[RMDB]
RNA sequence: GGGAACGACUCGAGUAGAGUCGAAAACAAUCAACUUCGCUAAUUUAUUUUGAUAUUUGUGCAACUGCUGUUGAACAAAUCGAACUAAAUCAUUCGCACGUUGUUUAACGCGUUCACGUUCGCCACGACGUGCCUUUAAGUUCGCUUAAAGGCACGUAAAAGAAACAACAACAACAAC
Reactivity to 2A3 in 0.01 (KOAc 150mM, MgCl2 10mM, bicine 150mM(pH8.5), 24C), signal-to-noise 1, nucleotides 027 to 126: c010a020a070u130c000a020a030c030u120u080c050g010c090u110a050a130u050u090u120a020u020u090u060u030g040a050u060a050u120u070u130g010u000g010c010a010a020c050u230g000c040u160g090u010u000g000a010a010c000a010a010a020u060c000g010a000a000c000u060a140a060a060u110c060a060u090u050c010g010c030a000c130g020u000u010g000u000u060u030a030a020c020g020c000g020u030u000c020a000c060g020u040u020c140g050c060c010a020c030g090
Reactivity to DMS in 0.01 (KOAc 150mM, MgCl2 10mM, bicine 150mM(pH8.5), 24C), signal-to-noise 2, nucleotides 027 to 126: c050a090a080u000c060a050a000c120u000u000c090g000c110u000a140a050u000u010u010a000u040u000u010u000g000a070u000a100u010u000u000g010u010g020c080a010a020c010u000g040c250u010g050u000u000g020a020a010c000a000a040a010u020c010g010a010a040c110u030a090a040a070u010c180a170u000u000c040g060c270a060c200g000u000u010g000u000u000u020a030a110c140g030c020g020u010u020c050a040c050g000u000u000c080g000c010c070a100c220g020
This 177-nucleotide RNA was probed chemically with 2A3 and DMS. For 2A3 the reverse transcriptase was SuperScript II with manganese. For 2A3, 1,129 sequencing reads were counted. The reactions ran in a buffer of 150 mM KOAc, 10 mM MgCl2 and 150 mM bicine (pH 8.5), at 24 C.